An RNA of 170 nucleotides, treated with DMS and 2A3 and read out base by base. The RNA was probed in 150 mM KOAc, 10 mM MgCl2 and 150 mM bicine (pH 8.5) at 24 C. For 2A3 the reverse transcriptase was SuperScript II with manganese. Source: RMDB library 15KLIB, as collected in RNAgym. For DMS the reverse transcriptase was MarathonRT. Reactivities are given for positions 27 through 129.
[RMDB]
RNA sequence: GGGAACGACUCGAGUAGAGUCGAAAAGUAAGUGUAAUUUAGCUUUCCGGUUAACCACCUCAAAGCUACGCGCUAAUGAUAAUAUCUUAUCAGUUAGAUUCACUGCUAACAAAAUUGUUGGUGGUGCCACCGUCGCUCUUCGGAGCGACGAAAAGAAACAACAACAACAAC
Reactivity to DMS in 0.01 (KOAc 150mM, MgCl2 10mM, bicine 150mM(pH8.5), 24C), signal-to-noise 3, nucleotides 027 to 129: g040u010a040a050g010u100g030u040a060a070u050u000u060a030g020c000u040u000u020c000c210g030g000u010u000a090a050c250c130a000c040c000u020c300a060a070a060g030c020u000a020c120g030c000g020c080u040a030a050u010g010a020u010a020a060u030a100u070c170u000u000a000u020c000a070g010u040u010a010g000a140u030u030c040a020c070u000g010c040u000a060a090c080a040a110a050a120u050u000g030u050u000g000g000u010g020g000u010g000c040c010a060c120
Reactivity to 2A3 in 0.01 (KOAc 150mM, MgCl2 10mM, bicine 150mM(pH8.5), 24C), signal-to-noise 3, nucleotides 027 to 129: g040u080a010a040g010u010g020u070a030a100u120u090u080a000g020c000u050u010u000c100c020g000g000u000u070a020a020c090c000a000c000c030u020c030a030a020a000g000c010u020a020c060g050c020g000c020u010a030a000u070g040a000u000a050a050u060a160u100c090u100u000a000u010c000a110g080u030u030a000g000a050u080u060c040a010c000u050g000c010u060a070a020c000a100a080a120a160u150u240g010u060u040g000g010u000g000g000u030g170c040c030a060c020